Conditions: 150 mM KOAc, 10 mM MgCl2 and 150 mM bicine (pH 8.5), 24 C. This 177-nucleotide RNA was probed chemically with 2A3 and DMS. The 2A3 profile rests on 1,576 reads. DMS (dimethyl sulfate) methylates the pairing face of unpaired adenines and cytosines. Values cover nucleotides 27 to 126. For 2A3 the reverse transcriptase was SuperScript II with manganese.
[RMDB]
RNA sequence: GGGAACGACUCGAGUAGAGUCGAAAAGGGGAAGUGUUUUUGUGCAAAUCUGGAAGCGAAAUAAUUCAGUUCUAUCAUAUCAGUGGAAUUCGGAUGAUUUCCAUGCAAUUGAACCAGAUCGUCCGGAACCCUACCUACUGUUCGCAGUAGGUAGGGUAAAAGAAACAACAACAACAAC
Reactivity to 2A3 in 0.01 (KOAc 150mM, MgCl2 10mM, bicine 150mM(pH8.5), 24C), signal-to-noise 2, nucleotides 027 to 126: g000g020g020g020a020a050g030u020g050u130u050u000u100u070g120u060g070c040a010a050a050u030c010u020g050g010a030a030g020c040g050a010a040a000u110a070a000u050u000c000a010g010u000u000c060u050a110u160c020a110u050a060u190c050a060g050u030g030g050a010a090u070u010c060g000g050a010u020g000a020u070u010u000c020c030a030u050g000c010a060a160u110u100g010a090a080c020c010a000g000a050u020c020g050u040c030c000g050g030a040
Reactivity to DMS in 0.01 (KOAc 150mM, MgCl2 10mM, bicine 150mM(pH8.5), 24C), signal-to-noise 2, nucleotides 027 to 126: g020g010g000g000a060a120g010u000g000u000u000u000u000u000g020u000g020c080a070a060a060u000c030u000g000g010a130a100g010c090g010a040a030a050u000a060a080u000u000c000a060g010u000u000c000u010a040u020c060a120u010a090u000c210a090g030u000g010g000a030a070u010u020c150g020g000a010u000g000a040u000u000u000c010c070a090u010g010c140a050a130u000u000g010a060a090c070c060a060g010a030u000c150g010u010c030c010g000g000a120